[RMDB]
RNA sequence: GGGAACGACUCGAGUAGAGUCGAAAAUGAAUUUUAGUUCUAGCUGCUGAAAGUUUGUCAUUAAAUGCAGCAACAGAUGCGCUUGUCAUACCAGUCGUACUCGUUGGCUGAUCAAUAUCAUUUUGCAAGUACAGAGUCUGUUCGCAGACUCUGUACUAAAAGAAACAACAACAACAAC
Reactivity to DMS in 0.01 (KOAc 150mM, MgCl2 10mM, bicine 150mM(pH8.5), 24C), signal-to-noise 3, nucleotides 027 to 126: u000g010a060a100u000u020u030u010a070g010u010u010c060u000a180g030c020u000g000c020u020g000a120a140a120g010u000u000u010g030u020c130a090u010u020a030a090a130u000g000c020a010g010c050a080a070c080a080g000a040u000g010c060g000c070u000u000g010u000c140a130u000a140c140c050a040g010u000c040g020u000a040c130u000c070g030u000u000g030g020c070u010g000a060u000c130a040a070u010a090u010c050a070u000u000u000u000g020c190a090
Reactivity to 2A3 in 0.01 (KOAc 150mM, MgCl2 10mM, bicine 150mM(pH8.5), 24C), signal-to-noise 2, nucleotides 027 to 126: u010g020a010a050u040u070u230u070a040g000u070u120c050u060a090g000c020u040g000c020u050g050a050a070a070g030u140u220u150g140u140c060a030u080u100a050a060a040u140g000c000a000g000c000a000a000c010a000g010a030u020g010c040g010c050u000u030g030u090c010a020u050a160c020c030a010g020u050c010g020u030a010c030u020c010g000u040u130g080g000c020u040g020a080u090c040a010a050u060a030u260c040a040u010u080u030u060g070c030a030

An RNA of 177 nucleotides, treated with DMS and 2A3 and read out base by base.
For DMS, 1,951 sequencing reads were counted.
2A3 adducts were read by reverse transcription with SuperScript II with manganese.